Source: RMDB library RNAMAK, as collected in RNAgym. The record gives the reactivity of an RNA of 207 nucleotides to DMS and 2A3. For 2A3 the reverse transcriptase was SuperScript II with manganese. For DMS the reverse transcriptase was MarathonRT. The DMS profile rests on 6,487 reads. The 2A3 profile rests on 4,324 reads. The RNA was probed in 150 mM KOAc, 10 mM MgCl2 and 150 mM bicine (pH 8.5) at 24 C.
[RMDB]
RNA sequence: GGGAACGACUCGAGUAGAGUCGAAAAGGGGUCCCUAGUCUUAGCUGUGUUGUCAGAGCCAUGGGAGCUGAAGCCUCCACGGCUCCCGUGGCUCUUGGAUUUACACAGCGACCACUAGGGACGGAGGCACCCAAACUCGUCAGUUCGCUGACGAGAACAUUUACAUACAGUUCGCUGUAUGUAAAUGAAAAGAAACAACAACAACAAC
Reactivity to DMS in 0.01 (KOAc 150mM, MgCl2 10mM, bicine 150mM(pH8.5), 24C), signal-to-noise 2, nucleotides 027 to 156: g010g020g020g010u000c000c000c000u000a050g010u000c020u000u000a100g030c000u000g040u000g010u000u010g000u010c020a050g000a030g000c040c000a030u010g030g010g010a040g000c010u010g000a040a140g040c020c000u000c030c030a300c080g020g000c010u000c000c000c010g090u000g010g010c000u000c000u000u000g020g010a060u000u010u000a070c010a040c030a010g030c010g010a040c160c120a070c020u010a050g020g000g020a020c030g020g020a030g030g000c050a200c010c000c000a050a100a160c000u000c000g010u000c000a000g030u000u000c300g030c020u000g000a010c000g000a010g000a100a210
Reactivity to 2A3 in 0.01 (KOAc 150mM, MgCl2 10mM, bicine 150mM(pH8.5), 24C), signal-to-noise 2, nucleotides 027 to 156: g060g000g030g000u010c000c000c000u000a040g000u040c090u210u300a010g000c000u000g020u010g020u050u020g040u060c060a020g000a000g010c000c010a010u010g030g000g000a010g000c000u010g020a100a000g030c000c050u050c060c050a040c000g010g020c000u000c020c010c010g000u020g000g000c020u000c000u000u010g000g000a000u020u010u060a000c010a000c000a000g000c000g000a000c000c000a000c000u000a000g010g000g000a000c020g000g000a020g000g000c020a060c010c000c010a030a060a090c010u000c000g000u000c000a000g010u020u100c200g010c110u000g000a000c010g000a000g000a000a000